[RMDB]
RNA sequence: GGGAACGACUCGAGUAGAGUCGAAAAGGGGUCUCACUUCGGGUUUGUCCGACCCGUCUUGGAUUUAUGGUUCUGAAGCCUCCACGGAACCAUUGUCAGACGCGGACAAACUUGGAGUGAGACGGAGGCACCCAAAAGAUCAGAUUCGUCUGAUCAAACCUUAGACUCUGUUCGCAGAGUCUAAGGUAAAAGAAACAACAACAACAAC
Reactivity to 2A3 in 0.01 (KOAc 150mM, MgCl2 10mM, bicine 150mM(pH8.5), 24C), signal-to-noise 2, nucleotides 027 to 156: g010g010g030g000u000c000u010c000a000c000u010u000c010g050g000g000u030u020u010g000u010c020c010g030a130c090c100c060g130u060c040u060u220g150g010a060u210u300u160a010u090g000g010u010u000c000u010g050a150a030g010c020c000u000c010c000a010c000g010g000a000a000c000c010a000u000u020g010u010c060a080g030a190c010g020c020g100g010a000c000a000a000a000c000u000u000g010g000a000g010u000g000a000g000a000c000g010g010a000g000g000c020a020c010c020c000a090a080a020a020g020a000u020c000a000g020a030u060u080c160g030u040c180u000g000a000u020c010a050a030
An RNA of 207 nucleotides, treated with 2A3 and read out base by base.
The 2A3 profile rests on 1,386 reads.
Source: RMDB library RNAMAK, as collected in RNAgym.
Values cover nucleotides 27 to 156.